Record summary
Chemical mapping of a 177-nucleotide RNA with DMS and 2A3. The reactions ran in a buffer of 150 mM KOAc, 10 mM MgCl2 and 150 mM bicine (pH 8.5), at 24 C. Values cover nucleotides 27 to 126. For DMS, 2,168 sequencing reads were counted. For 2A3 the reverse transcriptase was SuperScript II with manganese.

[RMDB]
RNA sequence: GGGAACGACUCGAGUAGAGUCGAAAAUCACGCGGUCCGUGGAGCCCGUGUUUUACGACGCCGAGCGCCACGGCGACGACGAGAGCAAAGAGAAGCGGGUGCAGCUUGGCGUUGAGUACGCAAAGAACCUUGCAGUCGUAUUCGUACGACUGCAAGGAAAAGAAACAACAACAACAAC
Reactivity to DMS in 0.01 (KOAc 150mM, MgCl2 10mM, bicine 150mM(pH8.5), 24C), signal-to-noise 3, nucleotides 027 to 126: u020c010a040c050g010c080g020g000u010c020c030g040u000g040g010a250g010c020c000c030g000u000g010u010u000u000u030a150c090g010a020c020g010c020c000g030a060g000c010g000c070c020a040c010g010g000c010g000a070c100g010a120c100g000a170g000a070g020c140a070a100a170g000a150g000a070a160g010c070g000g010g030u020g010c090a100g000c040u000u000g010g020c000g010u000u000g010a100g010u010a090c060g010c120a040a090a110g000a100a230
Reactivity to 2A3 in 0.01 (KOAc 150mM, MgCl2 10mM, bicine 150mM(pH8.5), 24C), signal-to-noise 2, nucleotides 027 to 126: u080c020a000c040g030c100g000g040u100c030c050g010u060g070g000a050g040c030c000c000g030u070g010u030u160u010u090a100c050g010a000c020g020c010c000g010a000g000c020g000c000c000a010c010g070g020c020g010a010c020g010a020c000g050a030g010a040g110c080a100a110a000g060a080g030a100a110g050c030g000g060g100u100g060c080a070g020c010u010u020g000g000c030g000u020u000g000a020g070u080a070c090g000c110a030a150a030g070a070a090